RNA sequence: GGGAACGACUCGAGUAGAGUCGAAAACGGGAUCCGUGCUGUUGCCGCAUUGCUGGUCGUCGGCACUCAUGCGGCCUACACCACCGGCAAGUACACCCACGGCUAUUGGGGCCUGAUGUCGUCCCGCGCACUCCGAACAGUUCGCUGUUCGGAGUGCAAAAGAAACAACAACAACAAC
Reactivity to DMS in 0.01 (KOAc 150mM, MgCl2 10mM, bicine 150mM(pH8.5), 24C), signal-to-noise 1, nucleotides 027 to 126: c010g020g000g000a050u020c040c090g040u010g020c070u010g000u000u000g060c100c000g050c100a140u020u000g070c090u000g000g000u000c150g010u010c090g000g040c010a000c300u020c170a190u000g040c110g000g030c020c110u000a060c060a060c100c120a110c060c020g010g000c130a060a040g000u000a050c240a120c060c030c010a180c110g010g000c090u000a150u000u000g020g020g000g000c010c030u000g030a030u000g000u020c090g000u020c000c000c010g050c250
Reactivity to 2A3 in 0.01 (KOAc 150mM, MgCl2 10mM, bicine 150mM(pH8.5), 24C), signal-to-noise 1, nucleotides 027 to 126: c030g010g010g020a040u080c060c020g050u050g000c000u090g030u210u030g020c020c020g020c060a110u070u150g010c070u030g020g060u090c060g010u050c020g010g010c050a060c080u220c020a080u210g040c150g020g000c040c000u000a000c020a010c010c000a030c020c000g030g030c030a050a010g060u060a030c030a140c060c000c000a000c040g030g050c000u060a140u240u300g060g050g050g000c020c030u050g020a030u120g080u010c020g000u070c000c000c000g010c000
The record gives the reactivity of an RNA of 177 nucleotides to DMS and 2A3. Conditions: 150 mM KOAc, 10 mM MgCl2 and 150 mM bicine (pH 8.5), 24 C. It was measured as part of the RMDB library OK2TRN. For DMS the reverse transcriptase was MarathonRT.